[RMDB]
Chemical mapping of a 177-nucleotide RNA with 2A3 and DMS. The 2A3 profile rests on 7,022 reads. The data come from the RNA Mapping Database (RMDB), library M2PK90. For DMS, 13,745 sequencing reads were counted. The RNA was probed in 150 mM KOAc, 10 mM MgCl2 and 150 mM bicine (pH 8.5) at 24 C.

RNA sequence: GGGAACGACUCGAGUAGAGUCGAAAAUGAAAGCUGUGUGAGCGAGGCGGGCGGAGGAUGAGGCCGUGCCCGGGCUCUGGCUGCAGCCGCCCGGGGACACGCCGUGCACCCUCGGGCUCCGGAAAAACAACUUAUUCUCUUUCGAGAGAAUAAGUUGAAAAGAAACAACAACAACAAC
Reactivity to 2A3 in 0.01 (KOAc 150mM, MgCl2 10mM, bicine 150mM(pH8.5), 24C), signal-to-noise 3, nucleotides 027 to 126: u130g040a090a030a030g030c040u050g010u030g030u090g220a040g040c040g010a040g020g070c070g030g000g000c030g030g010a020g030g010a020u050g040a040g040g000c130c040g010u020g020c010c000c000g000g010g000c040u090c110u090g050g000c070u210g090c060a030g020c020c010g000c000c000c010g020g000g000g010a040c010a000c010g010c010c000g000u040g030c020a030c010c000c010u010c000g040g100g000c030u010c030c010g040g010a040a110a010a010a000
Reactivity to DMS in 0.01 (KOAc 150mM, MgCl2 10mM, bicine 150mM(pH8.5), 24C), signal-to-noise 7, nucleotides 027 to 126: u000g010a090a090a130g000c030u000g020u000g010u000g010a070g010c040g010a110g010g020c060g000g010g030c020g010g000a030g000g010a050u010g000a130g010g010c060c080g020u000g010c000c000c000g000g000g010c030u010c150u010g020g000c070u010g010c210a110g020c030c070g010c010c000c000g010g000g000g000a050c010a030c090g010c030c010g020u010g010c040a040c030c000c000u000c010g010g020g010c020u010c020c020g010g000a030a050a060a100a130